[RMDB]
RNA sequence: GGGAACGACUCGAGUAGAGUCGAAAAGGGUUUAGGUCCUAGAGAGAUGAGAAAACCCAGAGGCUGCAUGCCCUACAGGAAGCCUUGCAUAUCAUGGGCACUCAAUGUGUGAUGAUGGGAGGAAGAGAUUGAAACGCUAAUUCGUUAGCGUUUCAAUAAAAGAAACAACAACAACAAC
Reactivity to 2A3 in 0.01 (KOAc 150mM, MgCl2 10mM, bicine 150mM(pH8.5), 24C), signal-to-noise 2, nucleotides 027 to 126: g010g010g000u040u060u060a080g030g030u000c010c010u110a010g000a010g010a010g000a080u100g020a050g030a110a040a040a040c030c020c020a000g030a030g070g020c010u040g000c040a050u140g020c020c000c000u040a080c040a050g010g070a070a000g050c000c000u020u030g110c060a060u040a030u140c020a070u070g020g180g000c030a010c010u080c060a130a140u170g020u010g000u020g040a030u030g000a010u030g000g000g050a030g040g020a020a040g070a010g020
Reactivity to DMS in 0.01 (KOAc 150mM, MgCl2 10mM, bicine 150mM(pH8.5), 24C), signal-to-noise 5, nucleotides 027 to 126: g010g000g010u000u000u000a080g020g010u000c010c020u010a120g010a140g010a120g010a060u000g000a130g010a090a070a060a070c020c010c020a120g010a080g000g010c030u010g000c090a080u000g000c020c020c020u000a120c150a100g010g020a150a080g010c010c030u000u010g000c100a090u000a060u000c060a040u000g030g000g000c030a060c050u000c210a050a090u010g000u000g000u000g010a040u010g010a040u010g010g000g000a080g010g000a070a060g000a100g010